The data come from the RNA Mapping Database (RMDB), library OK1LIB.
Structure probing data (2A3 and DMS) for a 177-nucleotide construct.
For 2A3 the reverse transcriptase was SuperScript II with manganese.
Conditions: 150 mM KOAc, 10 mM MgCl2 and 150 mM bicine (pH 8.5), 24 C.
The DMS profile rests on 16,260 reads.
RNA sequence: GGGAACGACUCGAGUAGAGUCGAAAAGAUGUUAGUUUAGCGGAGUUUCUUGGCAUUGGCAAAUCUCUGCUAAAUGCUGCGUACAGACGGAAACUCACACCGCCGCGAAGACUGGUCAGUGGCAAAAAUACUAGUCAUAGUUCGCUAUGACUAGUAUAAAAGAAACAACAACAACAAC
Reactivity to 2A3 in 0.01 (KOAc 150mM, MgCl2 10mM, bicine 150mM(pH8.5), 24C), signal-to-noise 8, nucleotides 027 to 126: g110a040u140g030u160u090a150g030u080u090u080a070g040c090g030g000a020g000u010u050u070c060u070u120g070g020c030a080u020u070g040g010c000a020a110a140u110c120u010c030u040g000c000u020a020a020a000u030g010c010u030g030c050g110u110a100c070a080g100a040c030g020g020a020a030a030c010u050c020a030c020a020c010c040g030c000c010g010c010g030a090a050g080a110c080u100g010g040u070c070a060g010u040g050g020c010a050a050a010a020
Reactivity to DMS in 0.01 (KOAc 150mM, MgCl2 10mM, bicine 150mM(pH8.5), 24C), signal-to-noise 6, nucleotides 027 to 126: g000a100u010g010u020u020a050g000u010u010u010a130g010c030g000g010a100g000u000u000u020c030u010u020g010g010c000a040u010u000g010g010c020a010a080a080u020c080u010c050u010g010c010u000a010a010a010u000g010c010u000g010c180g020u020a090c210a150g000a140c140g000g000a020a010a030c040u000c040a120c090a090c100c110g010c060c010g000c030g010a100a100g010a050c050u020g000g010u000c070a120g020u000g000g000c090a020a050a060a050